[RMDB]
RNA sequence: GGGAACGACUCGAGUAGAGUCGAAAAUACGACGUAUUCGUACGUCGUAAAGGUACGAAAGUACAAAGGAGCAAAAGCAUGAGCUCCUAAAAAUCAAGCAAAACACGAGCCGAUUCGUCGGCUCGAAAGGCCAAUAAUUAUUCGUAAUUAUUGGCCUAAAAGAAACAACAACAACAAC
Reactivity to DMS in 0.01 (KOAc 150mM, MgCl2 10mM, bicine 150mM(pH8.5), 24C), signal-to-noise 4, nucleotides 027 to 126: u000a000c000g010a000c010g020u000a000u000u030c200g030u000a000c000g000u020c000g000u000a000a080a090g010g000u010a000c000g000a140a100a120g000u000a000c030a090a170a140g000g000a020g020c010a040a070a100a150g020c100a060u000g000a190g020c010u000c000c010u000a000a030a040a020a040u010c070a040a060g030c070a090a060a110a120c220a180c020g000a010g010c000c000g010a040u000u010c180g000u000c010g010g000c010u000c000g010a010a040
Reactivity to 2A3 in 0.01 (KOAc 150mM, MgCl2 10mM, bicine 150mM(pH8.5), 24C), signal-to-noise 3, nucleotides 027 to 126: u040a010c020g000a000c000g000u000a020u020u070c180g020u050a010c000g000u000c000g000u000a020a010a000g080g000u000a000c000g040a170a000a010g010u000a010c040a050a200a020g010g000a000g000c020a010a160a190a000g030c040a110u090g060a030g020c000u010c010c020u050a030a030a000a000a020u140c070a080a000g070c010a070a080a040a050c090a040c050g000a000g010c000c010g000a010u030u020c130g030u010c000g100g010c000u000c000g000a000a000